[RMDB]
About this RNA: This 177-nucleotide RNA was probed chemically with 2A3 and DMS. 2A3 adducts were read by reverse transcription with SuperScript II with manganese. The reactions ran in a buffer of 150 mM KOAc, 10 mM MgCl2 and 150 mM bicine (pH 8.5), at 24 C. In probing experiments dimethyl sulfate is read out at A N1 and C N3, which are open when not base-paired. The data come from the RNA Mapping Database (RMDB), library M2PK50.
RNA sequence: GGGAACGACUCGAGUAGAGUCGAAAACCCUGGUUAUUCGUAACCAGGGGUUGAGUGAAUCCUCUCAGUGCAUCGGUGGAUCACACGAAACGCAUGGACGACAAUUACGGUUAUUCGUAACCGUAAAGUGAACAUAAACCUUCGGGUUUAUGUUCACAAAAGAAACAACAACAACAAC
Reactivity to 2A3 in 0.01 (KOAc 150mM, MgCl2 10mM, bicine 150mM(pH8.5), 24C), signal-to-noise 3, nucleotides 027 to 126: c010c000c010u000g010g020u020u010a030u070u040c250g020u030a010a000c000c000a000g000g000g020g010u070u180g060a030g020u130g070a100a070u000c000c010u020c020u000c010a050g020u010g100c020a070u060c070g120g000u080g010g100a090u100c060a030c000a010c110g010a050a040a020c040g030c040a040u040g060g060a010c060g030a020c050a080a140u060u010a010c010g010g000u000u010a010u030u080c210g010u050a010a010c010c010g000u010a030a030a010
Reactivity to DMS in 0.01 (KOAc 150mM, MgCl2 10mM, bicine 150mM(pH8.5), 24C), signal-to-noise 3, nucleotides 027 to 126: c000c000c000u000g000g000u000u000a030u000u020c180g020u000a000a010c000c000a010g000g000g000g000u000u000g000a150g020u000g000a180a170u000c010c020u010c120u000c030a080g030u000g010c060a050u000c060g010g030u000g010g000a120u010c080a060c030a070c010g010a050a040a120c050g010c020a020u010g000g000a080c070g010a040c120a090a170u010u000a000c000g000g000u000u000a020u000u010c200g030u000a000a010c000c000g000u000a010a020a060